[RMDB]
RNA sequence: GGGAACGACUCGAGUAGAGUCGAAAAUGAAAUACGGUGGUUAUCGCGGGUAUUUCACAGCUAUGCAACAGUUGGAAACCACAGACAUGCCAUUACUUGCCGUGGAGGAUGGCAGCUAUGAAAUCAAUAUGCGUCCACAUUUCGAUGUGGACGCAUAAAAAGAAACAACAACAACAAC
Reactivity to 2A3 in 0.01 (KOAc 150mM, MgCl2 10mM, bicine 150mM(pH8.5), 24C), signal-to-noise 1, nucleotides 027 to 126: u060g010a050a060a000u260a000c000g040g040u030g010g010u140u100a080u120c110g000c070g000g200g000u090a040u000u030u030c110a110c000a000g050c000u090a000u300g140c120a070a120c040a100g040u030u150g050g000a070a070a000c000c000a000c000a030g120a080c120a150u110g000c000c000a030u070u070a300c000u000u000g050c000c000g060u150g000g010a000g000g000a000u020g160g000c000a040g010c000u080a080u110g030a000a000a100u050c050a000a000